[RMDB]
RNA sequence: GGGAACGACUCGAGUAGAGUCGAAAAGAGCUCUAGAUGCGUUUGUAGACUGUUACAGCAUCUGCUAUCAGUCUGAGAUAGCUCAGGAUAGCUGGAGCUAUCUGCAACGGUGCAGACUCCAGUGACACCGUGAACAAACGUUCAUGUCACAGAGCAGCGGGUAUAUCGCAUUCGUGCGAUAUACCCGAAAAGAAACAACAACAACAAC
Reactivity to 2A3 in 0.01 (KOAc 150mM, MgCl2 10mM, bicine 150mM(pH8.5), 24C), signal-to-noise 1, nucleotides 027 to 156: g110a030g000c000u000c000u040a000g020a030u000g010c000g000u010u020u010g020u050a000g000a000c030u010g060u080u190a090c050a050g030c020a150u170c170u300g000c000u000a020u060c000a010g030u040c010u040g050a000g010a020u060a000g000c020u020c010a090g060g060a200u100a140g150c030u070g000g060a020g000c010u030a050u010c000u050g010c060a040a030c060g120g000u030g000c000a000g010a210c050u050c090c000a050g010u010g060a020c000a010c030c000g050u010g010a020a000c000a020a010a040c030g000u090u020c060a050u110g070u100c080a050c020a110g000a000g000c000a010g070